Chemical mapping of a 177-nucleotide RNA with DMS. Values cover nucleotides 27 to 126. DMS adducts were read by reverse transcription with MarathonRT. For DMS, 3,724 sequencing reads were counted.
RNA sequence: GGGAACGACUCGAGUAGAGUCGAAAAUCCUGUUGGUUAAUAUCGGAUCCCUCAGCACUGGUGGCCGCAUCUCGGCCACCAAAGGUGAUUUGGCCAAGAUCGUUCUUACGACGCCUGUGUGCACGGACAUGCCCUAGUAGUUCGCUACUAGGGCAUGAAAAGAAACAACAACAACAAC
Reactivity to DMS in 0.01 (KOAc 150mM, MgCl2 10mM, bicine 150mM(pH8.5), 24C), signal-to-noise 4, nucleotides 027 to 126: u000c000c010u000g020u000u010g000g020u000u010a060a080u010a080u000c090g000g010a110u010c030c010c060u000c120a200g000c070a060c140u000g020g010u000g000g010c000c000g050c300a190u020c220u010c000g020g010c010c000a010c010c010a010a030a030g000g020u000g000a120u000u000u000g000g010c030c090a050a050g000a080u010c070g000u000u010c070u000u000a100c050g000a050c120g010c030c020u000g000u000g020u000g010c040a100c160g000g010a180